[RMDB]
RNA sequence: GGGAACGACUCGAGUAGAGUCGAAAACACAUGCCAUCAUAUCGGUUAAGAACUCUUAACUCUGAUGGCUUUCGAGUUAUCUGGUGCAUUGAAGCUCUCCCUUCAAUUCAACGUACCGUUCCGUCAAAGAAAGCCUAUCGUUCGCGAUAGGCUUUCUAAAAGAAACAACAACAACAAC
Reactivity to DMS in 0.01 (KOAc 150mM, MgCl2 10mM, bicine 150mM(pH8.5), 24C), signal-to-noise 1, nucleotides 027 to 126: c110a080c160a140u010g030c000c000a020u040c020a080u000a130u000c220g000g060u000u000a000a000g000a170a150c300u000c010u010u000a000a020c010u000c050u000g000a020u000g000g000c000u000u000u010c100g030a090g000u020u000a020u010c050u000g020g000u000g040c000a080u000u000g020a030a020g070c080u000c120u010c070c050c010u000u000c080a040a060u000u000c020a000a000c080g040u000a020c030c000g000u010u000c000c010g010u050c060a080a030
Record summary
Chemical mapping of a 177-nucleotide RNA with DMS. The RNA was probed in 150 mM KOAc, 10 mM MgCl2 and 150 mM bicine (pH 8.5) at 24 C. DMS adducts were read by reverse transcription with MarathonRT.